[RMDB]
RNA sequence: GGGAACGACUCGAGUAGAGUCGAAAACUGGCGUUUAGUUGAUACUGUGCUCUAUUGUACUCUUGAGCCGUGUUUGAUGUGUGCCGGAGCUAUACAACAGGCCCGUAUUCGUAGAAUAGUUUGGGCACUGGUACAACUAGUUCGCUAGUUGUACCAGAAAAGAAACAACAACAACAAC
Reactivity to DMS in 0.01 (KOAc 150mM, MgCl2 10mM, bicine 150mM(pH8.5), 24C), signal-to-noise 6, nucleotides 027 to 126: c020u000g010g020c080g020u000u000u000a100g010u000u000g010a100u010a050c060u010g010u010g000c010u000c030u000a060u010u010g010u010a070c110u000c110u010u010g010a050g000c060c010g010u010g010u000u000u000g020a140u010g010u000g010u000g020c020c100g000g020a130g010c060u000a070u000a100c100a040a090c080a070g010g000c000c010c040g010u000a050u000u000c070g010u000a060g010a030a020u000a030g010u000u010u000g010g000g010c000a100
Reactivity to 2A3 in 0.01 (KOAc 150mM, MgCl2 10mM, bicine 150mM(pH8.5), 24C), signal-to-noise 3, nucleotides 027 to 126: c010u000g020g020c010g010u060u040u130a020g000u000u100g010a070u000a060c020u070g050u120g040c000u000c020u090a100u080u180g110u080a070c020u010c040u150u080g010a020g030c000c000g050u050g020u030u070u050g040a040u060g050u010g010u020g010c010c020g050g000a060g020c040u100a050u040a180c050a080a000c020a060g000g140c020c000c040g010u060a070u030u060c080g060u070a010g020a070a020u040a050g160u060u070u160g000g000g000c030a040
Description: Source: RMDB library OK2TST, as collected in RNAgym. The record gives the reactivity of an RNA of 177 nucleotides to DMS and 2A3. The reactions ran in a buffer of 150 mM KOAc, 10 mM MgCl2 and 150 mM bicine (pH 8.5), at 24 C. Values cover nucleotides 27 to 126. The DMS profile rests on 10,225 reads. 2A3 adducts were read by reverse transcription with SuperScript II with manganese. Values are in units of 0.01, from 0 to 300, in steps of 10.